[RMDB]
RNA sequence: GGGAACGACUCGAGUAGAGUCGAAAAGAUAUGGAGGGAGUCCCAUGAAGGUGGUGGGUCGGAAACGACCCAUGUUACAGCAUGAAGGACGAAGAACUCCUAAGUCAAAGUCUUCUUCGGAAGACAAGAAUAAUAAUGGGUUCGCCCAUUAUUAUUCAAAAGAAACAACAACAACAAC
Reactivity to 2A3 in 0.01 (KOAc 150mM, MgCl2 10mM, bicine 150mM(pH8.5), 24C), signal-to-noise 4, nucleotides 027 to 126: g020a020u060a030u120g000g000a010g000g040g040a030g020u000c020c010c000a010u030g070a090a080g120g020u160g010g030u010g000g000g000u000c000g000g040a080a040a010c010g000a000c000c000c020a000u010g010u020u110a020c000a020g060c000a000u020g100a300a120g010g000a000c040g100a200a060g040a070a040c010u000c000c000u010a090a030g050u030c070a160a040a040g020u010c000u000u010c000u040u090c260g160g000a000a010g000a000c000a010a040
Reactivity to DMS in 0.01 (KOAc 150mM, MgCl2 10mM, bicine 150mM(pH8.5), 24C), signal-to-noise 6, nucleotides 027 to 126: g010a050u000a300u010g000g000a030g010g000g010a130g010u000c000c010c010a020u000g010a040a050g010g020u000g010g020u000g010g000g020u010c010g000g010a080a100a140c010g000a020c000c000c000a000u000g010u010u010a020c030a110g000c010a010u000g000a190a140g010g010a010c010g000a110a120g000a150a190c000u000c000c000u010a030a110g010u010c030a090a110a160g000u000c000u000u000c000u000u010c170g010g000a010a000g010a010c000a050a060